[RMDB]
RNA sequence: GGGAACGACUCGAGUAGAGUCGAAAAUUCUCCCAAGAAGCGAAGAGAACACAAGAAUCGGAAGUCUUCCCGAAGACGCCGGGGACAUCUCGGAAUGAGAAAGGAGACAGGUGGAAGAAAAAGGGGUAAGCGUCAUCGUUCGCGAUGACGAAAAGAAACAACAACAACAAC
Reactivity to 2A3 in 0.01 (KOAc 150mM, MgCl2 10mM, bicine 150mM(pH8.5), 24C), signal-to-noise 4, nucleotides 027 to 129: u050u000c000u010c000c000c000a030a020g110a060a010g020c050g040a040a020g040a020g010a020a000c040a000c020a120a050g030a060a120u100c040g010g010a030a000g050u000c000u070u040c000c000c030g030a030a030g030a030c060g020c020c020g000g000g000g000a040c020a060u020c010u020c030g020g050a020a010u090g010a010g020a060a060a010g020g060a040g010a020c010a010g040g060u120g080g000a050a050g030a010a060a000a000a010g000g010g010g010u050a010a030g070
Reactivity to DMS in 0.01 (KOAc 150mM, MgCl2 10mM, bicine 150mM(pH8.5), 24C), signal-to-noise 5, nucleotides 027 to 129: u050u040c090u000c040c020c000a120a090g060a070a060g070c040g020a000a060g040a030g010a010a010c130a100c090a070a030g020a080a060u020c050g020g030a070a060g020u020c050u040u040c050c040c000g000a010a010g020a060c190g040c040c050g010g000g000g000a040c110a050u040c010u020c080g040g010a050a050u000g010a040g020a010a010a000g000g000a080g000a090c090a000g040g040u040g020g030a070a040g030a030a050a090a080a000g000g000g000g000u020a060a060g010